[RMDB]
RNA sequence: GGGAACGACUCGAGUAGAGUCGAAAACUGGUAUCCAUUCGUGGAUACCAGAAAAAGAUAUGGAUUCUGAUCAUGGGAGCAACGUCGGAAACGACUAUUGCGAAGAACAUGCGUAGAAUCCUAAGUCAAAAAAGGUCGUUGAUUCGUCAACGACCAAGUUGUCGAGUAAAUUCGUUUACUCGACAACAAAAGAAACAACAACAACAAC
Reactivity to 2A3 in 0.01 (KOAc 150mM, MgCl2 10mM, bicine 150mM(pH8.5), 24C), signal-to-noise 3, nucleotides 027 to 156: c000u000g000g000u010a000u000c010c000a020u040u100c300g120u060g000g000a010u010a000c000c000a000g000a010a030a000a000a010g010a010u020a010u040g010g000a010u000u000c020u020g050a090u190c010a000u020g060g070g080a030g010c000a010a000c010g010u000c000g000g060a020a040a030c010g000a010c010u060a190u020u060g000c010g020a050a030g000a030a090c010a000u040g020c040g060u120a020g010a000a000u000c000c000u010a010a010g030u000c010a010a000a000a070a050a090g020g000u030c010g000u000u000g000a020u020u090c150g030u010c080a000a000c000g010a000c020c000a010a010
Reactivity to DMS in 0.01 (KOAc 150mM, MgCl2 10mM, bicine 150mM(pH8.5), 24C), signal-to-noise 2, nucleotides 027 to 156: c000u030g020g000u000a010u000c000c000a140u020u000c260g050u000g010g010a010u010a020c050c010a020g000a010a020a090a110a160g010a080u010a260u010g020g010a000u020u000c010u000g020a120u000c020a010u000g000g000g020a300g010c100a010a050c300g040u010c010g010g000a180a110a150c010g020a010c030u020a030u010u000g020c000g010a110a150g000a100a110c010a000u000g000c100g000u000a030g020a010a040u000c000c020u000a020a090g020u000c080a000a030a070a120a080a100g020g030u010c020g020u010u020g000a070u010u020c250g000u000c010a010a020c000g040a010c000c000a040a020